[RMDB]
RNA sequence: GGGAACGACUCGAGUAGAGUCGAAAAGAAAAGGAGAACCAGGGUGGAUCUCGCUCGAACUGGUGAUUCAACUGACACCACUGUUGCGAGUGGGAAAUAAAAACAGUGUGCCACAGUUGAAAGAAAAGGGAUCAUUAAUGUUCGCAUUAAUGAUCCCAAAAGAAACAACAACAACAAC
Reactivity to DMS in 0.01 (KOAc 150mM, MgCl2 10mM, bicine 150mM(pH8.5), 24C), signal-to-noise 2, nucleotides 027 to 126: g000a060a000a010a030g000g000a060g060a160a050c000c060a040g030g000g000u020g040g010a080u020c020u000c040g070c090u000c000g000a040a100c060u040g000g000u000g000a130u010u000c000a040a040c140u010g000a110c120a120c150c040a040c090u030g000u000u030g020c070g000a070g030u000g020g030g000a080a070a020u000a050a060a040a020a030c070a040g050u020g000u020g030c020c070a040c040a050g000u000u000g020a090a080a030g010a050a070a060a110
Reactivity to 2A3 in 0.01 (KOAc 150mM, MgCl2 10mM, bicine 150mM(pH8.5), 24C), signal-to-noise 4, nucleotides 027 to 126: g060a000a030a000a010g110g070a080g010a060a010c020c030a030g050g050g030u120g020g010a070u000c010u000c000g010c010u010c010g050a030a030c010u040g000g030u050g090a160u080u060c060a110a100c060u080g040a030c000a010c030c020a030c050u040g050u050u150g170c030g010a030g000u050g040g030g070a010a050a010u190a010a060a000a000a000c030a020g000u040g000u020g100c040c040a060c000a010g020u020u050g060a120a120a100g100a030a080a050a030
The data come from the RNA Mapping Database (RMDB), library OK1LIB. An RNA of 177 nucleotides, treated with DMS and 2A3 and read out base by base. For 2A3 the reverse transcriptase was SuperScript II with manganese. For DMS the reverse transcriptase was MarathonRT. The RNA was probed in 150 mM KOAc, 10 mM MgCl2 and 150 mM bicine (pH 8.5) at 24 C.